[RMDB]
RNA sequence: GGGAACGACUCGAGUAGAGUCGAAAACGAGAUGAGUUCGCUCAUCUCGAAAGAACCGCGGGCGUGACUCGGUCAGAGCAUGACAGGCGCUGCGGUCACGAUAAAGUGGUGUGUUCGCACACCACAAUCAAGUCCAAUAGUUCGCUAUUGGACUUGAAAAAGAAACAACAACAACAAC
Reactivity to 2A3 in 0.01 (KOAc 150mM, MgCl2 10mM, bicine 150mM(pH8.5), 24C), signal-to-noise 5, nucleotides 027 to 126: c000g000a000g000a010u010g000a010g040u050u150c210g080c100u000c000a000u000c000u000c000g000a000a030a000g030a050a010c010c000g000c050g070g040g010c020g010u050g120a150c050u090c210g090g030u040c050a020g020a080g160c150a100u080g030a050c010a030g090g000c010g000c020u020g000c000g010g000u010c020a060c060g090a090u120a140a160a020g000u010g000g000u010g010u000g010u010u050c150g020c050a000c000a000c000c010a000c000a000a020
Reactivity to DMS in 0.01 (KOAc 150mM, MgCl2 10mM, bicine 150mM(pH8.5), 24C), signal-to-noise 5, nucleotides 027 to 126: c010g010a010g010a010u000g000a020g010u010u020c240g020c000u000c000a000u000c000u010c000g010a000a070a100g000a120a050c000c000g000c030g010g020g010c000g020u000g010a130c050u000c130g000g020u010c040a030g010a160g010c140a100u000g000a050c110a120g000g010c000g000c010u000g000c010g010g000u000c030a020c150g010a090u010a030a100a090g000u010g000g020u010g010u000g010u010u010c250g010c010a010c000a000c000c000a010c000a040a080

Record summary: This 177-nucleotide RNA was probed chemically with 2A3 and DMS. For 2A3 the reverse transcriptase was SuperScript II with manganese. Source: RMDB library M2PK50, as collected in RNAgym. For DMS, 6,400 sequencing reads were counted. The RNA was probed in 150 mM KOAc, 10 mM MgCl2 and 150 mM bicine (pH 8.5) at 24 C.